[RMDB]
RNA sequence: GGGAACGACUCGAGUAGAGUCGAAAAGUUAAGCUUCUUUAGCGAAGGGUACCGGUCCGCCAAAGACGCUUGUACCACUGUCUGCUGCAUGUUGGAGUAAGCAAUCAUGCAGAGACGCUGCAAAAAAGCUCCAAACUUACUUCGGUAAGUUUGGAGCAAAAGAAACAACAACAACAAC
Reactivity to 2A3 in 0.01 (KOAc 150mM, MgCl2 10mM, bicine 150mM(pH8.5), 24C), signal-to-noise 2, nucleotides 027 to 126: g100u160u100a000a050g000c010u020u040c010u000u060u100a010g000c020g070a070a110g060g000g050u040a030c060c040g000g020u020c010c000g000c010c020a030a030a020g010a010c010g010c030u060u030g030u070a140c030c080a060c110u050g000u030c000u070g210c000u000g000c060a000u010g020u020u010g150g080a300g130u130a140a000g110c000a020a020u150c000a000u000g000c000a000g010a000g030a000c060g000c110u230g030c090a080a080a000a000a000a000

Chemical mapping of a 177-nucleotide RNA with 2A3. The RNA was probed in 150 mM KOAc, 10 mM MgCl2 and 150 mM bicine (pH 8.5) at 24 C. Values cover nucleotides 27 to 126.